Overview: Chemical mapping of a 177-nucleotide RNA with DMS and 2A3. For DMS the reverse transcriptase was MarathonRT. It was measured as part of the RMDB libraries RFM100 and RFMREP. Values cover nucleotides 27 to 126. Conditions: 150 mM KOAc, 10 mM MgCl2 and 150 mM bicine (pH 8.5), 24 C.
RNA sequence: GGGAACGACUCGAGUAGAGUCGAAAAGCAAUAACAGGUCUGUGAUGCCCUUAGAUGUCCUGGGCCGCACGCGUGCUACACUGAUGAGUAGAAUGGGUUAAUACUGCAUUUAUUGCUUUCCCUUGACUCGAUGGAGUGUGUUCGCACACUCCAUCGAAAAAGAAACAACAACAACAAC
Reactivity to DMS in 0.01 (KOAc 150mM, MgCl2 10mM, bicine 150mM(pH8.5), 24C), signal-to-noise 1, nucleotides 027 to 126: g000c000a000a020u000a060a030c080a080g000g040u000c050u090g010u000g000a060u000g030c000c000c010u000u000a140g000a190u000g000u000c120c190u000g000g000g030c020c150g000c070a000c050g000c050g040u000g020c000u000a010c090a110c150u000g000a150u020g050a070g020u000a000g000a070a000u010g000g010g010u000u020a060a130u020a020c010u000g000c160a040u000u010u000a000u000u000g010c040u000u000u000c000c000c040u000u010g000a190c130
Reactivity to 2A3 in 0.01 (KOAc 150mM, MgCl2 10mM, bicine 150mM(pH8.5), 24C), signal-to-noise 4, nucleotides 027 to 126: g000c010a000a000u030a010a010c040a060g020g010u040c030u100g050u020g050a080u100g010c020c000c000u050u120a060g020a230u180g090u170c020c020u050g000g000g010c000c000g020c000a030c030g070c020g050u100g030c010u080a030c060a020c010u270g090a140u110g020a120g080u050a030g030a090a070u080g030g020g020u110u070a090a040u150a170c010u030g030c070a110u030u030u000a050u050u000g000c000u020u030u000c000c000c000u000u070g060a080c010